[RMDB]
RNA sequence: GGGAACGACUCGAGUAGAGUCGAAAAGCUGACUGGAAAGGCGCUGUUUCGCUGGCCGUUCCAGUGGCGCGAGUUCAUUCUGCAGUGCUGGUUCAUCAUGCGGGUCGGAUUUUUACCGACGAUCAUGCUGGAGAGUUUAUUUCGAUAAACUCUCCAGAAAAGAAACAACAACAACAAC
Reactivity to DMS in 0.01 (KOAc 150mM, MgCl2 10mM, bicine 150mM(pH8.5), 24C), signal-to-noise 4, nucleotides 027 to 126: g030c010u000g010a040c030u010g000g010a040a090a050g000g020c030g010c060u020g010u040u040u010c170g000c100u010g000g020c010c020g010u020u000c000c010a010g020u000g000g000c020g000c060g020a060g040u020u010c050a080u020u010c010u000g010c070a100g010u000g000c030u000g010g000u000u010c050a060u010c020a040u010g020c100g000g000g000u000c010g030g000a080u020u030u020u040u040a090c000c000g000a020c050g000a130u020c060a050u010g000
Reactivity to 2A3 in 0.01 (KOAc 150mM, MgCl2 10mM, bicine 150mM(pH8.5), 24C), signal-to-noise 6, nucleotides 027 to 126: g010c020u080g300a090c000u010g030g030a020a080a030g050g000c090g040c150u070g110u100u160u090c130g020c060u080g110g030c000c000g020u080u060c010c010a010g010u010g020g000c040g000c010g040a030g030u060u070c030a030u120u020c010u050g000c020a020g010u010g060c010u060g050g050u030u040c020a070u010c000a020u100g020c030g060g090g000u010c010g020g020a050u040u010u000u100u300a150c000c010g000a010c000g010a080u080c020a040u120g050